[RMDB]
RNA sequence: GGGAACGACUCGAGUAGAGUCGAAAAGAUAUGGAGUCAAGACAUGCGAUUAGUCAUUUCUUGGACCGUUUCUUCGGAAACGAAGAAACGCUAGAAAUGAAUUUCGCAACAGCUUGACUCCUAAGUCCGACGGUAUUAUCUUCGGAUAAUACCGUCGAAAAGAAACAACAACAACAAC
Reactivity to 2A3 in 0.01 (KOAc 150mM, MgCl2 10mM, bicine 150mM(pH8.5), 24C), signal-to-noise 1, nucleotides 027 to 126: g100a030u170a090u250g000g000a000g000u000c000a010a010g050a130c030a120u050g020c020g010a070u110u190a180g180u020c020a020u040u000u020c030u080u240g180g110a250c080c060g040u000u010u030c030u000u010c000g090g000a290a130a100c020g000a010a000g010a010a030a000c040g000c030u030a010g000a040a010a000u000g010a020a110u060u010u000c000g000c060a030a010c050a060g020c000u010u010g000a000c000u000c000c000u000a030a010g020u060c000
Reactivity to DMS in 0.01 (KOAc 150mM, MgCl2 10mM, bicine 150mM(pH8.5), 24C), signal-to-noise 1, nucleotides 027 to 126: g010a060u000a300u020g000g020a010g010u000c000a000a000g000a060c090a300u000g010c000g000a010u010u030a090g000u000c000a000u000u000u000c010u010u010g010g020a200c300c020g000u000u000u000c000u010u020c000g000g000a120a100a290c000g000a010a020g000a010a000a010c000g040c010u000a010g040a000a010a000u000g000a020a120u000u000u000c000g010c000a040a070c300a180g000c000u000u000g010a000c010u000c000c000u000a010a110g000u010c080